Chemical mapping of a 207-nucleotide RNA with 2A3. 2A3 adducts were read by reverse transcription with SuperScript II with manganese.
RNA sequence: GGGAACGACUCGAGUAGAGUCGAAAAGUAUAGCGAAGUUUGAGGCGACGAGCUAUACGAUGAAUCAGCCUCGAUUGAUAUCGGUAUACAGAUCCGCGGCGAUCAGAUACCGUAAUUAGUAGCCGCCAUCCGGAGUGGAGACGCACGACGGUCGUCAAGGCUAUCCCUAUUUCGAUAGGGAUAGCCUAAAAGAAACAACAACAACAAC
Reactivity to 2A3 in 0.01 (KOAc 150mM, MgCl2 10mM, bicine 150mM(pH8.5), 24C), signal-to-noise 1, nucleotides 027 to 156: g020u000a000u000a030g000c000g060a070a000g020u080u160u300g030a000g010g010c030g000a060c090g030a000g020c040u000a000u000a000c000g000a090u090g040a000a110u120c080a040g000c000c000u080c040g010a080u100u210g030a030u100a090u180c000g020g000u000a000u070a130c120a040g050a020u000c000c030g090c000g040g000c050g000a010u000c070a050g020a040u000a000c030c030g000u000a120a070u010u060a000g110u040a000g010c030c030g000c000c000a000u000c010c010g000g000a040g040u050g000g080a210g010a050c010g000c050a000c000g040a000c000g020g050u060c130g100u130c110a020